The record gives the reactivity of an RNA of 177 nucleotides to 2A3 and DMS. The 2A3 profile rests on 692 reads. For DMS, 910 sequencing reads were counted.

RNA sequence: GGGAACGACUCGAGUAGAGUCGAAAAUUACAACCAAAACAAUGACAGAUUUGUUUAUCUUCAGAAACUGUAAAUGAAGGUGUCUUUUCAUCAUGAAAAGGACACAAACCUAUAUAAUUGCGUCCUCGACCUCACUCUAUUUCGAUAGAGUGAGGUCAAAAGAAACAACAACAACAAC
Reactivity to 2A3 in 0.01 (KOAc 150mM, MgCl2 10mM, bicine 150mM(pH8.5), 24C), signal-to-noise 2, nucleotides 027 to 126: u100u010a050c030a140a120c100c040a000a050a100a020c020a000a170u200g030a030c010a040g120a050u000u020u020g060u070u210u120a090u030c050u100u080c020a010g130a140a280a120c110u200g090u250a050a020a150u110g000a050a000g040g040u030g020u000c000u050u030u030u020c020a140u020c050a040u050g060a100a040a000a000g080g000a010c000a000c000a000a030a000c070c000u170a120u020a000u030a300a300u160u070g010c060g010u000c010c080u160c110
Reactivity to DMS in 0.01 (KOAc 150mM, MgCl2 10mM, bicine 150mM(pH8.5), 24C), signal-to-noise 2, nucleotides 027 to 126: u010u000a110c170a160a260c050c020a080a090a100a100c070a030a060u000g000a150c130a030g010a070u020u000u010g010u000u000u000a080u000c030u000u000c030a030g030a300a120a070c240u000g000u010a010a070a130u000g000a060a050g010g000u000g010u030c000u000u000u000u000c000a110u000c210a090u000g000a000a030a000a040g030g020a010c120a020c040a040a030a070c070c050u010a060u000a030u000a100a160u000u000g000c080g000u000c020c010u000c300